[RMDB]
RNA sequence: GGGAACGACUCGAGUAGAGUCGAAAAAUUAGUAUGUACAGGGGUGAGUUGACCUGUCAUCUAGACUGCUGACCAUCAACUCACCGGUCAGCUGGAUGAUGUCCACAGAGUACGACAUCAGUACUCAGUGUAAUGAUUCGUUCGCGGAUCGUUACACAAAAGAAACAACAACAACAAC
Reactivity to 2A3 in 0.01 (KOAc 150mM, MgCl2 10mM, bicine 150mM(pH8.5), 24C), signal-to-noise 9, nucleotides 027 to 126: a000u010u030a020g080u070a050u090g050u060a010c020a020g060g030g040g050u100g070a090g030u040u040g060a050c010c030u010g010u000c000a000u000c000u010a040g080a140c060u040g010c010u000g010a010c010c010a010u090c030a040a070c040u020c070a050c030c000g000g000u000c000a010g000c010u020g020g020a050u090g010a020u080g070u030c010c010a070c050a070g020a010g020u020a010c050g070a030c090a150u120c050a050g010u020a020c010u010c030a010
Reactivity to DMS in 0.01 (KOAc 150mM, MgCl2 10mM, bicine 150mM(pH8.5), 24C), signal-to-noise 9, nucleotides 027 to 126: a070u020u000a020g000u040a020u000g000u050a010c010a030g010g000g010g010u010g010a080g020u000u000g000a060c040c050u000g000u000c000a010u000c010u000a040g010a130c100u000g010c030u010g000a020c000c160a050u020c100a050a060c100u010c090a050c150c080g000g000u000c000a010g000c000u000g000g000a070u010g000a080u010g000u010c010c030a090c210a110g000a030g000u000a020c040g000a150c170a090u040c100a090g010u000a020c010u000c010a130